[RMDB]
RNA sequence: GGGAACGACUCGAGUAGAGUCGAAAACGAGUACCUCGGCCUGCGCAGUGUCGUCAGACUCAGCGCGCGCCGGCCGUACGGCCUGAUCCGGCCCGGAUCAUGAUCGCGCUGGAUCCUGAUCUAGUGCCGCUGUGUUACCAUUCGUGGUAACACAGCGAAAAGAAACAACAACAACAAC
Reactivity to 2A3 in 0.01 (KOAc 150mM, MgCl2 10mM, bicine 150mM(pH8.5), 24C), signal-to-noise 2, nucleotides 027 to 126: c010g010a040g050u050a040c000c030u040c010g000g010c000c000u030g000c000g000c010a070g010u020g000u130c050g110u140c090a050g010a080c010u030c050a020g020c010g020c000g010c010g000c010c000g000g000c010c000g010u030a030c040g030g010c000c020u060g030a060u060c030c000g050g020c110c100c030g010g010a010u020c020a070u090g070a070u090c040g000c010g030c110u090g050g010a010u020c000c060u130g030a040u040c040u070a070g030u040g080c020
Reactivity to DMS in 0.01 (KOAc 150mM, MgCl2 10mM, bicine 150mM(pH8.5), 24C), signal-to-noise 2, nucleotides 027 to 126: c130g010a160g020u000a040c030c060u000c000g010g010c010c010u000g010c010g030c030a060g000u000g000u000c010g000u020c300a090g000a000c020u010c010a030g030c000g010c010g000c300g000c030c000g010g010c070c170g010u000a020c030g010g010c060c020u000g000a070u010c070c010g000g020c050c030c060g000g000a020u000c010a040u000g010a080u000c050g000c150g030c120u000g000g010a020u000c040c060u000g010a040u000c020u000a040g000u000g020c030